Notes
The record gives the reactivity of an RNA of 177 nucleotides to 2A3 and DMS. The 2A3 profile rests on 986 reads. Source: RMDB library OK1LIB, as collected in RNAgym. For 2A3 the reverse transcriptase was SuperScript II with manganese.
RNA sequence: GGGAACGACUCGAGUAGAGUCGAAAAUCGCAUCGAGCUCGGCGAGGUUGCGACCGCGCUGGCCGAGCUGGCUGGGGUAGGUCAAGCGGUUGUAAUCGCCCGUGAAGACCGCCCUGGGGACAAGCGCCGAUGGUUCUGGUUUCGACCAGAACCAUCGAAAAGAAACAACAACAACAAC
Reactivity to 2A3 in 0.01 (KOAc 150mM, MgCl2 10mM, bicine 150mM(pH8.5), 24C), signal-to-noise 1, nucleotides 027 to 126: u130c060g010c050a100u130c100g070a010g000c000u010c030g080g000c040g020a090g100g010u290u240g010c020g070a080c020c150g000c000g000c020u080g030g050c000c000g010a010g000c000u050g030g000c020u000g000g040g030g020u150a300g060g000u070c030a010a010g000c000g000g030u000u100g070u140a190a230u190c110g010c000c000c000g000u020g020a130a160g010a000c000c000g000c000c000c040u040g000g020g010g010a030c070a220a060g020c000g000c020
Reactivity to DMS in 0.01 (KOAc 150mM, MgCl2 10mM, bicine 150mM(pH8.5), 24C), signal-to-noise 2, nucleotides 027 to 126: u020c070g000c070a150u010c060g060a030g030c000u000c020g000g060c020g030a130g000g000u000u010g010c040g020a170c060c070g000c010g000c010u000g000g030c000c000g000a010g010c040u000g000g000c050u000g020g040g030g000u000a050g120g000u000c000a010a300g010c000g000g000u000u050g000u010a160a200u030c300g040c300c040c000g000u040g000a120a120g030a000c010c000g000c000c040c020u020g040g010g000g000a080c170a030a030g020c000g030c080